[RMDB]
RNA sequence: GGGAACGACUCGAGUAGAGUCGAAAAUGUAUCUCUUCCAGACCAGGUCAAUCCGGUAGAUGUGAUGGUUACAUCUUGGAAGGUGAAGAAUUAGCUUUCUACCUAAGAAGAUUGACUGCUAAGAAAACGGUAUAGGAGGGUUCGCCCUCCUAUACCGAAAAGAAACAACAACAACAAC
Reactivity to DMS in 0.01 (KOAc 150mM, MgCl2 10mM, bicine 150mM(pH8.5), 24C), signal-to-noise 1, nucleotides 027 to 126: u020g000u010a110u000c020u020c050u010u000c100c000a060g010a210c160c170a090g000g020u050c040a000a040u040c010c060g000g000u000a010g000a010u000g000u000g010a180u000g000g030u020u010a070c040a010u010c010u010u010g000g000a150a040g000g000u000g020a090a100g000a020a030u030u000a190g000c120u000u080u000c000u000a050c010c040u000a040a080g030a130a020g030a010u020u000g000a000c020u000g000c030u020a080a100g010a060a080a040a250
Reactivity to 2A3 in 0.01 (KOAc 150mM, MgCl2 10mM, bicine 150mM(pH8.5), 24C), signal-to-noise 3, nucleotides 027 to 126: u110g070u100a240u020c020u000c000u040u050c000c000a050g030a050c020c020a040g000g040u040c010a020a040u010c010c030g040g010u020a000g040a070u050g030u020g030a070u150g030g080u090u080a020c000a030u010c000u060u110g220g010a200a070g020g030u040g050a040a030g050a040a090u160u060a090g050c020u000u220u080c000u010a020c000c000u120a170a110g090a060a000g030a070u010u010g000a000c000u040g020c040u050a150a000g070a080a060a030a030